[RMDB]
RNA sequence: GGGAACGACUCGAGUAGAGUCGAAAAACAAAGAGAAAACUCACAUACAGACAGUCGCGUGUAAGGAGUGGUCAACCUUACGACUGUUUGAAAUAAUGCGACAAAAGAUCGAAAGAUCAAAAAAAAACGUAAUAAUGGACUUCGGUCCAUUAUUACGAAAAGAAACAACAACAACAAC
Reactivity to DMS in 0.01 (KOAc 150mM, MgCl2 10mM, bicine 150mM(pH8.5), 24C), signal-to-noise 1, nucleotides 027 to 126: a110c080a040a160a170g000a130g000a060a090a120a090c170u000c010a020c030a100u000a300c000a000g010a000c000a020g010u000c000g080c190g020u000g000u000a010a010g000g000a030g000u000g000g000u000c050a110a020c010c000u000u010a020c000g020a070c010u000g000u000u000u000g000a040a030a060u010a080a070u010g000c040g000a060c130a130a060a110a110g000a020u000c000g040a120a040a090g000a000u000c000a000a000a000a010a080a040a050a010a030
Reactivity to 2A3 in 0.01 (KOAc 150mM, MgCl2 10mM, bicine 150mM(pH8.5), 24C), signal-to-noise 1, nucleotides 027 to 126: a000c040a000a120a020g130a020g040a040a180a060a030c020u060c030a010c000a060u190a020c020a000g030a000c000a000g010u010c000g070c080g170u160g010u060a010a000g000g010a000g050u030g060g000u040c010a000a020c000c000u010u020a010c020g000a000c000u010g000u020u010u000g000a000a000a000u110a020a010u080g020c010g010a020c030a040a150a010a000g000a040u020c020g050a050a020a010g010a000u050c100a010a080a050a000a000a010a000a000a000